Record summary: Chemical mapping of a 207-nucleotide RNA with 2A3. For 2A3, 698 sequencing reads were counted. The reactions ran in a buffer of 150 mM KOAc, 10 mM MgCl2 and 150 mM bicine (pH 8.5), at 24 C. As a SHAPE reagent, 2A3 marks flexible, mostly unpaired nucleotides at the ribose 2'-OH.
RNA sequence: GGGAACGACUCGAGUAGAGUCGAAAAGCCCGUUCCAAGCCAAGAGCUGAGCCAUGUGACCCUAGCGAAGGCCCGGGUUACUUGUCUCCUAAAGUGGGGGGCAAUGCGUGAGGCUGGUUUCACAGAGCAGCGACAACCUCCCGCUCCUGGCAGUGGACACGUUUAGUGACUUCGGUCACUAAACGUGAAAAGAAACAACAACAACAAC
Reactivity to 2A3 in 0.01 (KOAc 150mM, MgCl2 10mM, bicine 150mM(pH8.5), 24C), signal-to-noise 1, nucleotides 027 to 156: g040c000c000c010g000u020u000c010c000a050a000g020c000c000a020a020g010a000g000c060u070g030a000g000c010c000a020u010g000u010g020a020c000c020c010u030a000g020c020g210a120a040g240g000c000c050c020g000g000g000u000u030a000c000u010u020g000u010c010u040c010c000u300a230a140a080g050u100g000g000g000g020g020g000c000a060a000u010g000c000g000u070g000a060g000g140c020u000g000g040u060u250u230c210a200c000a010g000a000g000c030a000g000c000g050a070c160a230a300c030c000u000c000c000c020g000c000u000c000c000u010g020g000c030a020g000u030g010g010a010